[RMDB]
RNA sequence: GGGAACGACUCGAGUAGAGUCGAAAACCGGCGAUAAGGAGGAUGCCUUGGCAAAGCACUUUACUUUUUGAAGUGUCCUGCGCGCCCACGACAGCCCUUGAAAAUCCUGGCUAGAGAUUUAUUCGCAAUUCCUGGAGCGAUUCGUCGCUCCAGGAAUAAAAGAAACAACAACAACAAC
Reactivity to 2A3 in 0.01 (KOAc 150mM, MgCl2 10mM, bicine 150mM(pH8.5), 24C), signal-to-noise 1, nucleotides 027 to 126: c000c000g000g020c030g030a000u040a070a070g050g010a000g050g000a060u130g010c000c030u020u060g000g000c080a000a100a000g050c030a020c020u020u040u100a090c020u030u190u060u110u200g080a020a020g000u030g040u060c050c060u030g000c020g000c030g000c000c010c000a000c000g050a000c010a000g000c010c000c000u000u110g030a140a060a000a000u040c000c000u030g160g000c030u100a000g010a000g030a150u040u140u050a070u030u020c060g000c100a020
Reactivity to DMS in 0.01 (KOAc 150mM, MgCl2 10mM, bicine 150mM(pH8.5), 24C), signal-to-noise 1, nucleotides 027 to 126: c040c020g040g000c100g000a060u040a060a060g000g000a080g000g000a160u000g050c020c000u010u000g020g000c060a000a140a260g000c060a000c040u000u110u040a050c200u000u000u060u040u010g000a030a010g080u040g000u000c090c000u000g000c040g000c080g010c020c000c040a060c080g000a100c230a120g050c020c000c000u050u000g000a040a080a060a060u000c000c000u000g020g000c110u000a110g000a120g010a110u000u080u000a130u030u000c010g000c160a030
Conditions: 150 mM KOAc, 10 mM MgCl2 and 150 mM bicine (pH 8.5), 24 C. Chemical mapping of a 177-nucleotide RNA with 2A3 and DMS.